[RMDB]
RNA sequence: GGGAACGACUCGAGUAGAGUCGAAAAACCCGAAAUCGCCCUUAUGCGGGGGCCGAAAACUUGGGGGCGGCAUGUCCUCCAGUCCUUCCUUCCCAGACUCCUCGAUGAGGUCUCGUCCCGUGGGGCUCGGCGGUGGGGGAGCAUCUCCUGUAGGGGACUAUAACUUCAAGUUCGCUUGAAGUUAUAGAAAAGAAACAACAACAACAAC
Reactivity to DMS in 0.01 (KOAc 150mM, MgCl2 10mM, bicine 150mM(pH8.5), 24C), signal-to-noise 1, nucleotides 027 to 156: a120c020c010c020g000a090a140a110u000c040g010c010c010c040u010u000a010u010g030c120g020g020g020g050g040c090c070g000a090a070a070a060c050u000u030g040g000g010g020g000c030g030g010c120a110u010g020u000c000c020u010c020c010a030g020u000c020c010u000u000c010c040u000u020c010c020c000a230g040a050c000u000c030c010u000c020g000a120u010g010a160g020g020u020c040u000c020g030u010c000c030c020g020u020g000g010g030g040c060u000c060g030g000c080g020g010u000g000g020g000g030g000a110g040c040a080u000c040u000c020c020u020g050u000a080g000g030g010g030a190
Reactivity to 2A3 in 0.01 (KOAc 150mM, MgCl2 10mM, bicine 150mM(pH8.5), 24C), signal-to-noise 2, nucleotides 027 to 156: a000c030c000c000g010a110a100a020u050c030g000c000c010c010u060u090a050u190g060c110g000g010g000g000g060c050c000g070a090a060a000a050c040u110u100g010g010g000g000g010c020g080g100c110a090u220g020u010c000c000u000c000c010a010g000u020c000c000u070u070c000c000u040u110c020c010c000a030g010a110c000u020c020c000u020c040g060a110u130g050a050g030g080u000c050u020c080g060u040c000c000c040g000u020g000g020g010g010c080u010c050g050g000c060g000g030u110g030g000g000g000g010a020g010c010a090u030c010u020c020c000u060g110u160a050g000g000g000g000a000